[RMDB]
RNA sequence: GGGAACGACUCGAGUAGAGUCGAAAACAUUUAGAGGAAGUAAAAGUCGUAACAAGGUUUCCGUAGGUGAAGGUUUGCCUACCAAAGCCCUUAGCCAGCGACUCUAAAGAAAUCAGCUAUCAGUCGCCCCUUCGGGGGCUGGCGACGCCAUCAAUCUAGAUAUUGAGAUGUUCGCAUCUCAAUAUCUAAAAGAAACAACAACAACAAC
Reactivity to 2A3 in 0.01 (KOAc 150mM, MgCl2 10mM, bicine 150mM(pH8.5), 24C), signal-to-noise 2, nucleotides 027 to 156: c010a010u070u120u160a120g010a060g040g080a070a100g040u100a130a160a170a000g000u000c000g020u010a030a030c030a020a080g000g000u000u030u020c050c020g010u000a010g050g000u070g070a170a060g080g030u050u150u130g000c010c000u010a000c000c020a060a050a020g010c000c000c030u040u020a000g040c050c030a010g020c000g000a010c000u030c150u070a020a020a000g060a030a090a010u090c030a030g010c040u040a020u070c040a030g050u060c020g000c000c010c000c000u000u090c110g050g000g000g080g000c010u010g010g030c020g010a040c070g070c050c010a080u110c020a010a070u040c030u060
Conditions: 150 mM KOAc, 10 mM MgCl2 and 150 mM bicine (pH 8.5), 24 C. An RNA of 207 nucleotides, treated with 2A3 and read out base by base. 2A3 adducts were read by reverse transcription with SuperScript II with manganese. The data come from the RNA Mapping Database (RMDB), library ARCHII. Values cover nucleotides 27 to 156. High 2A3 reactivity points to a flexible backbone, as in loops and unpaired stretches.